[RMDB]
RNA sequence: GGGAACGACUCGAGUAGAGUCGAAAAGAUAUGGAAGCUUCCCUAUUGCCGAUGAAAGUCGUUCGGAAACGAACGACUGGAGGCAUAGGGAGAGCUUCCUAAGUCAAAACUUGCGUUCGCGCAAGAAGAAGAGAUAUUUCUUCGGAAAUAUCUCUUCAAAAGAAACAACAACAACAAC
Reactivity to DMS in 0.01 (KOAc 150mM, MgCl2 10mM, bicine 150mM(pH8.5), 24C), signal-to-noise 5, nucleotides 027 to 126: g000a050u000a300u000g010g000a010a010g010c000u000u000c000c000c000u000a000u010u010g060c010c000g000a140u010g010a180a140a020g000u000c000g030u000u010c000g010g000a110a120a200c000g010a010a000c000g020a010c000u000g010g000a030g010g020c010a010u000a010g000g010g000a010g020a020g020c000u000u000c000c000u000a020a070g010u000c040a120a090a150a230c010u000u000g000c000g030u010u010c290g030c020g010c000a000a010g000a110a130
Reactivity to 2A3 in 0.01 (KOAc 150mM, MgCl2 10mM, bicine 150mM(pH8.5), 24C), signal-to-noise 4, nucleotides 027 to 126: g010a020u080a050u210g000g000a010a000g000c000u000u000c000c000c000u010a030u020u300g010c000c050g300a300u020g000a020a010a010g000u000c000g000u000u000c000g000g000a040a040a040c000g000a000a010c000g000a010c000u000g000g010a000g000g000c000a010u000a000g000g010g000a070g080a000g010c000u000u000c000c000u010a020a010g020u000c040a020a030a170a280c000u000u010g000c010g070u050u120c300g000c000g000c180a000a010g020a030a040